[RMDB]
RNA sequence: GGGAACGACUCGAGUAGAGUCGAAAAAGCCGUAAGCUACUUAAGAGCUGGCACCUACCAUCGGUGUUCCAUUUAAAGGGCAAGCUCAGCUUCACAUGCCGGUAGACGGUGCUGCCUGCGGCUCAACAGCAUAGUAAUUAUUCGUAAUUACUAUGCUAAAAGAAACAACAACAACAAC
Reactivity to DMS in 0.01 (KOAc 150mM, MgCl2 10mM, bicine 150mM(pH8.5), 24C), signal-to-noise 9, nucleotides 027 to 126: a030g000c000c010g030u010a040a060g010c030u020a080c150u050u040a150a110g010a060g010c030u020g000g000c000a030c010c010u000a300c220c080a030u010c030g000g010u000g010u000u030c040c040a100u020u040u040a060a100a120g000g010g020c210a050a040g010c040u040c100a120g000c020u000u020c120a110c190a060u030g020c010c010g000g000u010a040g010a150c220g010g010u000g000c020u000g000c110c070u010g000c010g000g000c010u000c110a090a080c160
Reactivity to 2A3 in 0.01 (KOAc 150mM, MgCl2 10mM, bicine 150mM(pH8.5), 24C), signal-to-noise 9, nucleotides 027 to 126: a000g010c010c000g010u040a060a020g020c050u090a070c070u300u240a150a040g050a020g080c030u070g020g000c000a010c000c000u070a100c020c040a040u060c030g000g000u030g040u100u130c020c010a080u110u150u280a140a190a120g040g020g000c080a040a010g010c040u080c280a060g010c000u080u070c060a090c020a110u190g010c000c000g020g000u020a040g020a060c070g000g010u020g010c020u020g020c000c010u020g000c000g010g000c000u020c030a090a160c060
Structure probing data (DMS and 2A3) for a 177-nucleotide construct.
Conditions: 150 mM KOAc, 10 mM MgCl2 and 150 mM bicine (pH 8.5), 24 C.
Source: RMDB library OK1LIB, as collected in RNAgym.
The DMS profile rests on 49,409 reads.
For 2A3, 70,462 sequencing reads were counted.
For DMS the reverse transcriptase was MarathonRT.